This 207-nucleotide RNA was probed chemically with 2A3 and DMS.
For 2A3, 9,586 sequencing reads were counted.
DMS adducts were read by reverse transcription with MarathonRT.
The RNA was probed in 150 mM KOAc, 10 mM MgCl2 and 150 mM bicine (pH 8.5) at 24 C.

RNA sequence: GGGAACGACUCGAGUAGAGUCGAAAAGGGGUCAUGGAAGAAGGCGAUUGUCAGUAACGAUAAGUAGGCUGAAGCCUCCACGGCCUACUUUUGACGUUACUUGGAUUUAUCGCUGUAAACAUGACGGAGGCACCCAAAACCGAAGUUCGCUUCGGAACACGAUAAUAAUCUUCGGAUUAUUAUCGUGAAAAGAAACAACAACAACAAC
Reactivity to 2A3 in 0.01 (KOAc 150mM, MgCl2 10mM, bicine 150mM(pH8.5), 24C), signal-to-noise 6, nucleotides 027 to 156: g110g010g040g000u020c000a000u010g010g040a150a230g010a010a010g120g010c010g060a120u130u300g020u050c000a010g000u000a000a000c010g020a050u010a110a000g000u000a000g000g000c000u020g020a080a010g030c010c010u000c000c010a020c020g000g000c000c010u000a010c000u020u020u010u070g160a050c010g010u000u010a000c020u020u110g130g010a040u120u220u210a180u220c010g000c000u010g000u010a000a000a000c000a000u000g000a000c020g000g000a010g000g000c000a040c000c010c010a030a100a010a020c000c000g010a000a000g010u100u180c220g060c100u000u000c000g000g000a010a020
Reactivity to DMS in 0.01 (KOAc 150mM, MgCl2 10mM, bicine 150mM(pH8.5), 24C), signal-to-noise 3, nucleotides 027 to 156: g010g000g020g030u000c000a020u000g010g010a070a150g010a200a300g010g030c000g010a050u000u010g050u010c000a040g000u010a020a040c020g020a180u000a070a050g010u000a010g030g010c000u010g000a020a120g030c000c010u000c000c010a300c040g000g010c000c000u000a000c010u010u010u000u000g010a110c040g000u000u000a000c020u010u010g080g010a050u000u000u000a060u020c030g010c000u000g000u010a090a150a300c020a030u010g010a020c000g020g040a060g060g090c070a120c060c010c040a050a060a160a110c020c020g010a020a300g040u000u010c260g010c000u010u000c000g020g000a130a220